[RMDB]
Description:
An RNA of 177 nucleotides, treated with 2A3 and DMS and read out base by base. The DMS profile rests on 3,407 reads. The 2A3 profile rests on 7,494 reads. DMS adducts were read by reverse transcription with MarathonRT.

RNA sequence: GGGAACGACUCGAGUAGAGUCGAAAACUUACGUGGUUCGCCACGUAAGAAAGUGGAAGAGGAGGGAUGAACCCACACAAAACAAGACAUCGAAAAAUAAAAAAACACGCUGCUUCGGCAGCGUGAACCUAUAUCAUGUCUUCGGACAUGAUAUAGGAAAAGAAACAACAACAACAAC
Reactivity to 2A3 in 0.01 (KOAc 150mM, MgCl2 10mM, bicine 150mM(pH8.5), 24C), signal-to-noise 5, nucleotides 027 to 126: c000u000u000a000c000g000u000g010g010u020u040c070g040c070c000a000c000g000u000a000a000g010a010a010a000g080u060g030g070a110a060g030a080g140g050a070g030g040g010a040u070g040a060a050c030c020c000a020c000a000c010a010a100a020a020c020a030a030g100a050c020a050u130c130g140a050a050a030a110a000u280a020a130a030a010a010a010a000c000a000c000g020c000u000g010c000u030u060c250g090g020c000a000g020c000g010u000g000a000a010
Reactivity to DMS in 0.01 (KOAc 150mM, MgCl2 10mM, bicine 150mM(pH8.5), 24C), signal-to-noise 4, nucleotides 027 to 126: c000u000u000a000c010g030u000g000g000u000u030c250g010c000c000a000c010g010u000a000a000g000a040a070a100g000u000g000g000a070a080g020a130g010g020a130g010g010g000a090u000g020a080a110c070c020c020a080c100a050c100a030a060a070a050c100a070a070g010a070c070a020u000c090g000a010a080a080a070a100u050a030a000a070a060a060a060a170c000a000c000g010c000u000g010c000u010u010c180g010g000c010a000g020c000g010u000g000a010a060